[RMDB]
Source: RMDB library OK3TST, as collected in RNAgym. The record gives the reactivity of an RNA of 207 nucleotides to 2A3 and DMS. Values cover nucleotides 27 to 156. The reactions ran in a buffer of 150 mM KOAc, 10 mM MgCl2 and 150 mM bicine (pH 8.5), at 24 C. For DMS the reverse transcriptase was MarathonRT. 2A3 adducts were read by reverse transcription with SuperScript II with manganese.
RNA sequence: GGGAACGACUCGAGUAGAGUCGAAAAAUGCUAAGUGCCUGGUCUAAUAUCCCUAGGCAGGAAGUGACAGAGAAGUAUCCAGAUUCUGCCUCUUGUAGGCUCAACUACAGGAUCCAAGCACUUAACCAUGUCACACAUUGCUGCUCACAUCAAGGGAUGAUGCACGUAAUUUCGAUUACGUGCAUCAAAAAGAAACAACAACAACAAC
Reactivity to 2A3 in 0.01 (KOAc 150mM, MgCl2 10mM, bicine 150mM(pH8.5), 24C), signal-to-noise 3, nucleotides 027 to 156: a010u110g000c000u030a040a040g020u000g020c020c010u030g020g010u010c050u050a090a120u040a100u180c010c000c020u010a030g020g000c000a020g030g010a100a040g000u020g020a000c030a020g140a020g070a190a010g040u050a070u090c040c000a000g010a100u060u030c000u050g030c010c000u020c010u000u110g030u060a000g000g090c120u050c120a070a120c000u050a030c010a000g010g000a000u000c030c000a030a010g030c020a030c000u060u020a040a020c040c030a050u040g020u010c020a010c000a000c010a060u000u140g040c010u010g000c000u050c000a150c030a180u170c090a100a070g020g000g000a060
Reactivity to DMS in 0.01 (KOAc 150mM, MgCl2 10mM, bicine 150mM(pH8.5), 24C), signal-to-noise 2, nucleotides 027 to 156: a040u020g000c040u000a030a090g010u000g010c010c000u000g000g020u010c030u000a080a140u000a130u000c020c010c010u020a080g050g030c030a060g020g000a110a110g010u000g030a140c050a060g020a180g020a070a150g010u000a100u020c070c040a100g020a210u000u000c020u010g030c010c020u000c060u000u000g020u000a030g030g000c160u020c180a040a100c020u000a050c010a060g000g000a040u000c010c020a000a110g060c090a050c040u000u000a020a040c030c080a160u000g030u090c020a060c010a160c110a190u000u000g040c020u010g010c000u020c040a130c110a100u000c050a090a040g000g060g020a180